[RMDB]
RNA sequence: GGGAACGACUCGAGUAGAGUCGAAAAGGGGUCGCUGAUCUCUGCAUAGGCUUUUGACGCUCUGAAGCCUCCACGGAGCGAUAAGCCUAUGAACUACAGAGAAUAGCGACGGAGGCACCCAAACCAAUCUACGAAUGUUCGCAUUCGUAGAUUGGAAACAUUAUGUUUGCUUCGGCAAACAUAAUGUAAAAGAAACAACAACAACAAC
Reactivity to 2A3 in 0.01 (KOAc 150mM, MgCl2 10mM, bicine 150mM(pH8.5), 24C), signal-to-noise 4, nucleotides 027 to 156: g090g000g010g010u000c010g000c000u020g060a120u030c000u010c010u010g050c010a010u010a010g020g000c040u100u140u300u250g150a090c070g000c000u000c000u020g030a090a030g010c000c000u010c010c000a020c000g010g000a010g000c000g030a040u110a200a060g000c000c000u000a010u010g000a010a030c090u190a040c010a010g000a000g010a010a010u020a020g000c000g000a000c020g000g000a000g000g000c000a030c000c010c000a050a020a030c000c000a000a000u000c000u010a010c000g000a000a000u010g020u050u120c280g000c150a010u010u000c000g000u000a000g000a000u000u000g000g000a010a010
Reactivity to DMS in 0.01 (KOAc 150mM, MgCl2 10mM, bicine 150mM(pH8.5), 24C), signal-to-noise 1, nucleotides 027 to 156: g010g050g000g040u000c010g030c020u000g010a130u000c000u000c000u010g000c000a050u000a030g020g000c030u010u000u000u000g010a220c070g060c000u000c000u010g000a050a090g000c000c020u000c030c010a300c040g060g010a040g030c030g020a130u000a040a070g020c020c000u000a030u000g000a070a170c040u030a140c000a080g000a080g000a060a110u010a050g000c010g000a010c010g050g010a050g090g040c020a130c020c010c000a080a120a260c000c000a010a020u000c010u000a000c000g010a040a010u010g020u000u020c300g050c000a060u030u000c000g040u000a000g000a010u000u010g000g000a070a040
The record gives the reactivity of an RNA of 207 nucleotides to 2A3 and DMS.
The 2A3 profile rests on 4,893 reads.
The reactions ran in a buffer of 150 mM KOAc, 10 mM MgCl2 and 150 mM bicine (pH 8.5), at 24 C.
2A3 adducts were read by reverse transcription with SuperScript II with manganese.